[RMDB]
RNA sequence: GGGAACGACUCGAGUAGAGUCGAAAAUUCUUGAACUGUGAACUCGUGUGUGCAUGCUCCUCAUAUAUUGUUCUAGAUCCCAUGCAUGAUGCAUAUCGAUCGAUCUGAUCUGAAUUAGGUCAUCGAUGGAUCGGAUAUACUUCGGUAUAUCCGAUCCAAAAGAAACAACAACAACAAC
Reactivity to DMS in 0.01 (KOAc 150mM, MgCl2 10mM, bicine 150mM(pH8.5), 24C), signal-to-noise 1, nucleotides 027 to 126: u000u000c020u000u000g020a030a020c100u030g040u000g010a090a100c100u000c090g030u000g010u000g040u030g050c050a030u000g010c030u000c060c080u010c090a050u010a090u000a070u030u010g010u000u000c000u010a100g010a070u000c010c000c010a110u020g020c050a100u010g020a130u030g000c050a050u020a040u010c000g010a030u010c090g030a030u000c040u040g000a000u000c300u010g010a060a070u000u000a030g020g010u000c000a030u000c020g010a010u000
Reactivity to 2A3 in 0.01 (KOAc 150mM, MgCl2 10mM, bicine 150mM(pH8.5), 24C), signal-to-noise 1, nucleotides 027 to 126: u050u010c000u020u030g020a070a050c040u030g020u060g080a050a010c020u020c100g030u030g010u000g000u040g060c000a050u070g010c020u040c020c030u000c000a000u110a020u050a020u130u140g010u040u020c010u030a000g000a050u040c000c000c000a000u030g000c010a030u110g030a020u100g030c000a000u010a000u090c020g010a020u010c060g010a000u000c010u090g020a010u000c100u200g080a240a120u040u000a070g000g000u000c010a010u020c020g010a000u060
An RNA of 177 nucleotides, treated with DMS and 2A3 and read out base by base. For DMS the reverse transcriptase was MarathonRT. Conditions: 150 mM KOAc, 10 mM MgCl2 and 150 mM bicine (pH 8.5), 24 C.